[RMDB]
RNA sequence: GGGAACGACUCGAGUAGAGUCGAAAAUCACAGAGCUGCCUCCAGGGCUUGUUUUGGUAAUGCCUUUCUCCCAUUUAUGGGCUACCCUAGUGGCCUGAGUACAUGACCCGGCGGGUUUGUGCCGGGUGUAAACAUAACACUUCGGUGUUAUGUUUACAAAAGAAACAACAACAACAAC
Reactivity to 2A3 in 0.01 (KOAc 150mM, MgCl2 10mM, bicine 150mM(pH8.5), 24C), signal-to-noise 2, nucleotides 027 to 126: u070c030a020c010a050g070a020g040c030u050g030c030c010u020c050c040a060g020g030g010c030u070u090g010u060u160u050u090g040g020u070a090a030u130g050c000c020u030u090u010c060u040c030c010c020a020u050u180u050a190u200g020g010g000c010u020a020c030c030c060u050a060g030u010g040g020c040c000u030g010a050g050u120a070c080a100u180g030a010c000c000c000g010g040c060g030g190g040u100u150u130g080u090g000c000c000g000g000g000u000
Reactivity to DMS in 0.01 (KOAc 150mM, MgCl2 10mM, bicine 150mM(pH8.5), 24C), signal-to-noise 4, nucleotides 027 to 126: u010c040a090c090a100g010a100g000c030u000g000c040c020u000c040c080a080g010g010g020c050u000u010g010u000u000u010u000g010g000u010a070a070u000g010c030c020u000u000u010c090u010c000c020c020a110u000u000u010a110u020g000g000g000c040u000a030c030c160c120u000a130g020u000g000g010c010c000u000g000a120g010u010a080c130a090u000g010a100c000c000c000g020g020c010g010g010g000u000u010u010g020u010g000c010c000g000g000g000u010
Chemical mapping of a 177-nucleotide RNA with 2A3 and DMS.